[RMDB]
Notes: Chemical mapping of a 177-nucleotide RNA with DMS and 2A3. For DMS, 14,838 sequencing reads were counted. The RNA was probed in 150 mM KOAc, 10 mM MgCl2 and 150 mM bicine (pH 8.5) at 24 C. For 2A3 the reverse transcriptase was SuperScript II with manganese.

RNA sequence: GGGAACGACUCGAGUAGAGUCGAAAAGCAUAUGUGUGUUCAUUUGUCUCUGUGUGUGAGUUCUGGGUCUAUUUUCCUUUGUAUUCAUUGAGUGGGUCUGUGUUUGUGUCUUAGGAGUUGCCCGUGAGAGGUGAGUAAUAUUCGUAUUACUCACCUCAAAAGAAACAACAACAACAAC
Reactivity to DMS in 0.01 (KOAc 150mM, MgCl2 10mM, bicine 150mM(pH8.5), 24C), signal-to-noise 4, nucleotides 027 to 126: g020c080a060u000a060u000g010u010g020u000g010u010u000c050a090u010u010u000g010u000c030u000c030u000g000u010g020u000g010u000g010a080g010u000u000c050u000g010g020g000u000c060u000a070u000u000u010u000c010c020u000u000u010g010u010a080u010u000c060a070u000u000g010a080g030u000g000g010g000u000c040u000g020u000g000u000u000u010g010u000g010u000c030u000u000a110g010g010a090g010u000u000g000c010c010c020g020u000g000a240
Reactivity to 2A3 in 0.01 (KOAc 150mM, MgCl2 10mM, bicine 150mM(pH8.5), 24C), signal-to-noise 1, nucleotides 027 to 126: g000c010a040u060a110u220g080u030g010u020g040u120u050c060a090u040u000u180g070u000c010u000c000u080g010u040g030u010g030u020g050a060g030u010u040c020u050g040g000g040u020c040u080a100u060u050u010u040c000c000u020u080u060g080u040a150u010u090c040a050u010u150g040a030g030u100g000g000g040u000c020u000g060u020g030u020u070u030g020u000g010u000c010u070u040a050g030g020a070g040u070u040g060c000c000c000g000u030g040a140